[RMDB]
RNA sequence: GGGAACGACUCGAGUAGAGUCGAAAACCGCAAAACCGCGGCAAGUGGAGUUAGCGAGAGGAGGCUGGGUUUUGGCUUCCUUAAGCAAUCGGUCACCGAGAAGGUGUGGUCGUUACCGUGAAAUUCCGUGACAAAAUAACGUUCGCGUUAUUUUGAAGCAAUGUACAACAUUCGUGUUGUACAUUGCAAAAGAAACAACAACAACAAC
Reactivity to 2A3 in 0.01 (KOAc 150mM, MgCl2 10mM, bicine 150mM(pH8.5), 24C), signal-to-noise 4, nucleotides 027 to 156: c000c000g000c000a070a100a020a030c070c020g010c000g010g000c080a100a060g060u100g080g050a090g040u080u090a020g020c000g010a030g000a000g030g010a000g010g010c030u100g070g160g150u120u080u170u210g050g000c000u010u000c000c000u000u000a010a000g000c000a010a020u070c010g000g010u030c000a020c010c050g060a080g080a200a100g110g020u160g000u010g050g010u010c010g020u030u060a070c020c000g000u020g050a090a050a050u110u010c040c030g040u100g040a050c010a010a010a000a000u000a000a000c010g000u030u060c240g000c000g070u000u020a000u000u010u000u010g020a030a000
Reactivity to DMS in 0.01 (KOAc 150mM, MgCl2 10mM, bicine 150mM(pH8.5), 24C), signal-to-noise 2, nucleotides 027 to 156: c000c000g000c030a100a020a140a120c090c060g070c020g010g050c030a070a060g010u000g010g010a130g000u000u010a180g040c000g000a300g030a050g060g000a010g040g050c000u030g040g010g030u000u000u030u000g010g040c010u000u000c100c040u000u000a020a300g030c030a130a080u000c010g010g030u010c010a090c050c000g020a170g010a130a110g020g010u020g000u000g000g030u000c020g000u000u000a070c000c000g000u020g000a150a080a120u000u000c020c010g000u000g000a270c010a000a010a010a010u000a010a020c020g010u000u000c300g010c050g040u000u000a010u000u000u000u000g000a170a110